[RMDB]
RNA sequence: GGGAACGACUCGAGUAGAGUCGAAAAUGGAAGACACAAUGGCUGCUGUUAAAGACCGUGUACUUCAUAUGUACCAUACUGAAGGUGCUGGUGGCGGUCAUGCGCCUGAUUUAAUUAAAUCCGCUGCCACGGUCAGCGGAUUCGUCCGCUGACCGUGAAAAGAAACAACAACAACAAC
Reactivity to 2A3 in 0.01 (KOAc 150mM, MgCl2 10mM, bicine 150mM(pH8.5), 24C), signal-to-noise 2, nucleotides 027 to 126: u130g020g030a010a050g070a030c030a010c000a140a110u220g030g000c030u120g010c020u080g140u300u260a180a130a050g040a030c000c050g020u000g030u030a210c000u000u050c010a020u020a010u160g070u040a050c020c000a070u100a200c090u090g090a120a010g050g000u020g010c010u010g030g080u050g000g000c000g000g030u080c020a000u060g000c020g020c000c010u040g030a080u040u030u150a150a170u080u120a030a020a080u060c010c020g050c060u030g000c070
Reactivity to DMS in 0.01 (KOAc 150mM, MgCl2 10mM, bicine 150mM(pH8.5), 24C), signal-to-noise 2, nucleotides 027 to 126: u000g000g010a050a000g010a070c040a030c020a130a140u010g010g020c060u000g020c070u010g000u010u000a100a140a100g010a120c070c020g010u000g030u000a070c010u000u010c030a040u000a000u000g010u000a200c070c010a110u000a080c230u000g020a130a070g010g010u000g000c020u000g010g050u000g000g000c000g020g020u000c060a050u000g000c010g010c050c000u000g000a140u010u010u010a030a080u010u020a050a070a080u000c000c010g000c020u010g030c150